[RMDB]
RNA sequence: GGGAACGACUCGAGUAGAGUCGAAAAUGCUUGUACCAGUCUCGGAGGUUGAUUCGUUAGCCUGGUUCAGGGUCGGCGACACAACUUCCUGAACCGGCGACCGACAAAGGUGGCGUCAGUGGUAAUAGGCUGCGAUGUGCUUCGGCACAUUGCAGCCAAAAGAAACAACAACAACAAC
Reactivity to 2A3 in 0.01 (KOAc 150mM, MgCl2 10mM, bicine 150mM(pH8.5), 24C), signal-to-noise 1, nucleotides 027 to 126: u060g070c000u000u080g000u030a060c000c000a000g060u040c000u000c030g020g000a000g110g060u010u120g040a240u080u000c060g090u000u050a050g050c040c100u300g060g060u080u070c170a010g130g000g070u180c060g000g100c010g200a000c070a000c020a300a050c030u060u040c000c010u010g000a000a000c000c000g000g000c000g000a000c000c000g040a000c060a010a170a010g060g000u010g000g000c000g090u010c000a080g060u030g050g020u040a070a150u120a030
Reactivity to DMS in 0.01 (KOAc 150mM, MgCl2 10mM, bicine 150mM(pH8.5), 24C), signal-to-noise 1, nucleotides 027 to 126: u000g010c030u000u000g000u000a120c060c000a180g000u030c070u000c080g050g030a110g000g000u000u030g030a080u000u000c000g000u050u030a250g000c000c000u130g080g000u030u020c070a000g000g010g070u110c180g000g000c000g000a090c130a220c090a110a090c180u000u020c010c000u000g000a000a030c000c000g010g000c000g000a030c300c040g010a030c210a000a270a100g000g000u010g000g000c010g010u000c010a140g000u000g010g000u000a000a080u120a040